Chemical mapping of a 177-nucleotide RNA with 2A3 and DMS. For 2A3, 21,094 sequencing reads were counted. DMS (dimethyl sulfate) methylates the pairing face of unpaired adenines and cytosines.

[RMDB]
RNA sequence: GGGAACGACUCGAGUAGAGUCGAAAAGGCCCGGGAUCGACCAUUUCAACAGUCGGCGCUGCCCUAGAACCUCGGAGAUCUGGGUCCAGAUGCGGGUGCCGAGGUUGUCGGUUCGCCCGCUGGCCGGCAUAGGAAAGAGUUUCGACUCUUUCCUAUGAAAAGAAACAACAACAACAAC
Reactivity to 2A3 in 0.01 (KOAc 150mM, MgCl2 10mM, bicine 150mM(pH8.5), 24C), signal-to-noise 9, nucleotides 027 to 126: g020g010c010c010c000g020g010g000a130u230c050g020a020c010c010a100u070u190u120c030a050a030c010a120g190u020c000g010g000c020g000c020u070g010c010c000c000u030a060g040a110a090c030c020u100c150g090g060a180g030a140u080c030u060g020g010g030u040c050c020a070g030a090u140g040c070g070g050g030u060g000c000c000g000a030g050g000u010u020g030u020c050g020g000u120u100c040g030c000c000c000g020c080u030g010g000c000c000g010g010
Reactivity to DMS in 0.01 (KOAc 150mM, MgCl2 10mM, bicine 150mM(pH8.5), 24C), signal-to-noise 9, nucleotides 027 to 126: g010g010c010c010c010g000g000g010a060u020c050g010a040c010c010a140u030u020u010c040a040a040c060a050g010u000c020g010g010c010g020c020u000g010c080c100c010u010a060g000a060a060c030c020u020c300g010g000a170g010a120u020c020u000g000g000g010u010c050c060a040g000a070u010g010c020g010g010g010u010g010c000c000g000a020g000g010u010u000g000u000c130g000g000u020u020c070g000c000c000c000g000c070u020g000g000c010c000g010g000
DMS adducts were read by reverse transcription with MarathonRT.